[RMDB]
Structure probing data (DMS) for a 177-nucleotide construct.
RNA sequence: GGGAACGACUCGAGUAGAGUCGAAAACCAGGCUGACUUCUGUCUAUUUCUCCUGCAGAGUGAGCUGGACUUGGAAAAGGGCUUGGAGAUGAGAAAAUGGGUCCUGUCGGGAAUCCUGGCUAGCGAGCAGCGCAGAAAGGUUCGCCUUUCUGCGCUGAAAAGAAACAACAACAACAAC
Reactivity to DMS in 0.01 (KOAc 150mM, MgCl2 10mM, bicine 150mM(pH8.5), 24C), signal-to-noise 1, nucleotides 027 to 126: c020c010a170g020g000c000u000g000a040c010u020u010c000u000g010u000c070u000a110u000u000u010c000u000c030c010u000g010c010a010g010a090g010u000g000a020g050c020u000g010g010a090c070u020u020g010g000a050a060a120a110g010g000g010c030u000u000g000g020a100g020a050u000g010a080g000a100a040a130a110u010g020g010g040u010c030c040u000g010u000c070g000g000g010a080a080u000c040c030u000g010g000c010u000a070g000c070g000a150g000
The RNA was probed in 150 mM KOAc, 10 mM MgCl2 and 150 mM bicine (pH 8.5) at 24 C. For DMS, 1,216 sequencing reads were counted.